Overview:
Source: RMDB library OK2TRN, as collected in RNAgym. The record gives the reactivity of an RNA of 177 nucleotides to 2A3 and DMS. The RNA was probed in 150 mM KOAc, 10 mM MgCl2 and 150 mM bicine (pH 8.5) at 24 C. DMS adducts were read by reverse transcription with MarathonRT. For 2A3 the reverse transcriptase was SuperScript II with manganese.

RNA sequence: GGGAACGACUCGAGUAGAGUCGAAAACGUACGUACGCGCUGCGUCUGAUCACUGGCGCUAUAGCGUACCAUCUAGCGGAUCUAGGCCGUCUGGCCGUGCGUAGCACAUCAGGUACCGAUCGCGUGCCCAGUGAUAGGGAUUCGUCCCUAUCACUGGAAAAGAAACAACAACAACAAC
Reactivity to 2A3 in 0.01 (KOAc 150mM, MgCl2 10mM, bicine 150mM(pH8.5), 24C), signal-to-noise 8, nucleotides 027 to 126: c020g050u120a010c050g000u010a000c010g020c020g030c100u040g020c010g020u000c020u090g270a300u230c090a120c290u080g010g030c000g000c020u040a040u120a110g010c010g000u010a020c000c000a070u040c060u090a030g030c020g050g010a020u000c040u140a090g120g000c040c020g170u120c110u090g040g010c040c050g000u010g000c050g170u150a030g030c020a030c000a060u110c040a030g000g050u070a070c020c020g030a050u050c050g010c020g110u050g040c010
Reactivity to DMS in 0.01 (KOAc 150mM, MgCl2 10mM, bicine 150mM(pH8.5), 24C), signal-to-noise 7, nucleotides 027 to 126: c110g000u010a080c160g010u000a030c060g010c020g010c180u000g010c030g030u010c020u010g000a140u020c220a120c170u010g010g010c000g020c000u000a060u010a170g010c040g010u000a020c020c100a090u000c080u000a100g020c050g010g000a050u000c090u000a110g010g020c020c020g010u020c110u000g000g010c110c040g020u000g010c020g020u010a080g010c040a040c040a090u000c080a040g010g000u000a070c040c030g000a060u000c060g010c050g030u000g000c060